[RMDB]
RNA sequence: GGGAACGACUCGAGUAGAGUCGAAAAGAGGAAAGUCCGGGCUCCACAGGGCAGGGUGGUUGCUAACGGCAACCCGGGGUGACCCGCGGGACAGUGCCACAGAAAACAGACCGCCCGGCCGACAGCGGUCAUCAAACACGUUCGCGUGUUUGAUGACAAAAGAAACAACAACAACAAC
Reactivity to 2A3 in 0.01 (KOAc 150mM, MgCl2 10mM, bicine 150mM(pH8.5), 24C), signal-to-noise 5, nucleotides 027 to 126: g140a030g020g050a150a020a020g020u010c030c010g020g030g000c020u040c030c020a040c060a110g060g000g030c010a010g030g000g020u040g000g020u010u040g020c060u090a100a040c070g010g000c000a020a040c010c010c000g020g010g000g040u100g120a160c030c010c020g070c110g030g000g030a040c050a060g130u050g030c020c020a040c010a040g160a040a100a020a000c030a010g050a030c000c000g000c000c000c000g020g010c000c000g070a030c020a020g060c040g100
Reactivity to DMS in 0.01 (KOAc 150mM, MgCl2 10mM, bicine 150mM(pH8.5), 24C), signal-to-noise 3, nucleotides 027 to 126: g000a080g000g000a110a050a070g000u010c020c000g000g000g000c050u020c010c050a140c120a060g000g030g020c020a050g010g020g000u010g000g000u010u000g010c060u010a180a160c230g010g000c020a070a100c020c000c020g000g000g030g010u050g000a200c040c000c000g010c080g040g000g000a160c120a190g010u030g010c010c020a140c190a080g010a090a070a090a120c210a130g010a080c000c010g040c010c020c000g000g000c020c000g000a100c120a060g030c090g000